[RMDB]
Record summary: Chemical mapping of a 177-nucleotide RNA with DMS and 2A3. The DMS profile rests on 1,270 reads. Reactivities are given for positions 27 through 126.

RNA sequence: GGGAACGACUCGAGUAGAGUCGAAAAGAUCAAUUAUGAUUGCAAUGUUAUAUGUCAAGGCAGACAUAUCUAGCUGUCGCCUUAGCUAGAGAUAGCCGAUUUAUUGCUUUCAUAAGAACGGCAAGAACGCAUAAUGACCGUUCGCGGUCAUUAUGCGAAAAGAAACAACAACAACAAC
Reactivity to DMS in 0.01 (KOAc 150mM, MgCl2 10mM, bicine 150mM(pH8.5), 24C), signal-to-noise 2, nucleotides 027 to 126: g010a050u010c090a160a160u000u000a010u000g000a020u000u000g030c010a000a030u000g000u010u000a160u010a050u000g010u000c130a040a100g000g020c090a160g010a050c080a060u000a050u010c080u020a020g000c060u000g030u000c050g000c090c060u010u000a030g010c010u000a000g000a130g000a140u000a040g020c040c050g030a080u010u000u030a010u010u000g000c000u000u000u000c000a020u000a020a000g000a050a110c150g030g030c090a100a060g030a050a140
Reactivity to 2A3 in 0.01 (KOAc 150mM, MgCl2 10mM, bicine 150mM(pH8.5), 24C), signal-to-noise 1, nucleotides 027 to 126: g070a100u090c030a010a080u010u000a020u000g000a010u000u000g040c000a010a010u060g080u260u150a190u040a030u280g150u100c070a020a010g060g000c020a030g000a120c030a080u120a030u010c020u000a010g020c010u000g090u100c070g120c050c050u020u050a000g000c010u000a000g010a020g000a030u030a010g000c000c000g060a000u060u120u020a010u000u030g000c000u000u000u000c000a010u010a000a010g050a070a030c050g030g000c020a040a020g050a120a020